[RMDB]
RNA sequence: GGGAACGACUCGAGUAGAGUCGAAAAGAACUCACCUUCGGGUGAGUUCAAACCCGAUGAAGCGGCACUUAGACAGCUUCAUACACGUAAGAAGUGCAAUAAAAACAACGCGGUUCGCCGCGUUGAAUCUAUGCUAUACCUUCGGGUAUAGCAUAGAAAAAGAAACAACAACAACAAC
Reactivity to 2A3 in 0.01 (KOAc 150mM, MgCl2 10mM, bicine 150mM(pH8.5), 24C), signal-to-noise 3, nucleotides 027 to 126: g000a000a000c000u000c000a000c000c010u020u070c190g080g000g010u000g000a000g000u000u000c000a000a000a000c000c000c000g010a040u020g000a000a000g000c040g050g010c050a010c050u020u030a040g030a110c020a030g020c000u000u000c000a000u030a020c130a000c070g110u090a070a030g030a090a020g040u000g020c030a050a070u180a130a110a020a000a010c010a000a000c000g000c000g000g060u040u040c170g030c080c000g000c000g000u000u000g000a000a000
Reactivity to DMS in 0.01 (KOAc 150mM, MgCl2 10mM, bicine 150mM(pH8.5), 24C), signal-to-noise 3, nucleotides 027 to 126: g000a030a000c000u010c000a010c010c000u010u000c230g030g020g050u000g000a010g000u000u000c010a010a140a120c010c000c010g010a050u000g010a010a010g030c000g040g000c010a060c060u000u000a070g030a110c140a190g010c000u000u000c000a020u010a260c170a080c170g010u010a110a140g010a100a050g000u010g020c070a170a110u010a060a050a060a140a130c000a000a000c010g010c000g030g000u000u010c190g010c000c020g020c010g000u000u000g010a040a050

The record gives the reactivity of an RNA of 177 nucleotides to 2A3 and DMS. It was measured as part of the RMDB library M2PK50. For DMS the reverse transcriptase was MarathonRT. Conditions: 150 mM KOAc, 10 mM MgCl2 and 150 mM bicine (pH 8.5), 24 C.